[RMDB]
RNA sequence: GGGAACGACUCGAGUAGAGUCGAAAAUGAUACUGCGUAUGGUGCCAUGCAGUUGCAACUAUGCGACACGUGUGUCGAUACGUAUCGCGCAACCAUACGGUGUCAUGGCCAAUCGACGUCGUGGUUGUGCGAUAUGUACCGACUAAUACUGUGCGACGAAAAGGAUAUACUUCGGUAUAUCCUUUUCAAAAGAAACAACAACAACAAC
Reactivity to 2A3 in 0.01 (KOAc 150mM, MgCl2 10mM, bicine 150mM(pH8.5), 24C), signal-to-noise 6, nucleotides 027 to 156: u140g040a020u070a100c030u040g020c020g020u060a050u150g090g000u060g070c050c040a030u080g040c040a040g020u030u040g030c030a100a070c070u100a070u250g040c030g080a070c030a020c060g040u050g020u010g000u030c000g000a000u010a010c000g000u000a000u010c010g000c000g000c000a000a000c000c000a030u060a250c020g010g000u010g000u000c050a090u100g140g050c100c090a050a060u120c110g010a000c000g010u010c010g000u020g000g010u000u000g000u010g000c000g000a000u000a000u000g000u000a000c000c000g010a000c020u010a040a000u040a020c060u040g000u020g040c010g020a070c040
Reactivity to DMS in 0.01 (KOAc 150mM, MgCl2 10mM, bicine 150mM(pH8.5), 24C), signal-to-noise 3, nucleotides 027 to 156: u000g020a110u000a060c050u000g010c080g040u010a070u000g030g020u000g010c090c070a150u010g010c030a170g000u000u010g000c020a090a240c130u000a080u000g020c000g010a140c010a030c030g030u000g010u000g010u000c030g020a020u010a000c000g020u000a010u000c010g030c010g030c010a020a040c010c010a050u010a020c040g020g020u000g020u000c050a140u000g010g010c170c140a120a090u000c050g020a030c020g000u000c010g050u000g010g010u000u000g030u000g010c040g020a000u000a000u000g000u000a000c010c020g010a050c030u010a050a100u010a040c030u000g030u000g000c000g020a160c150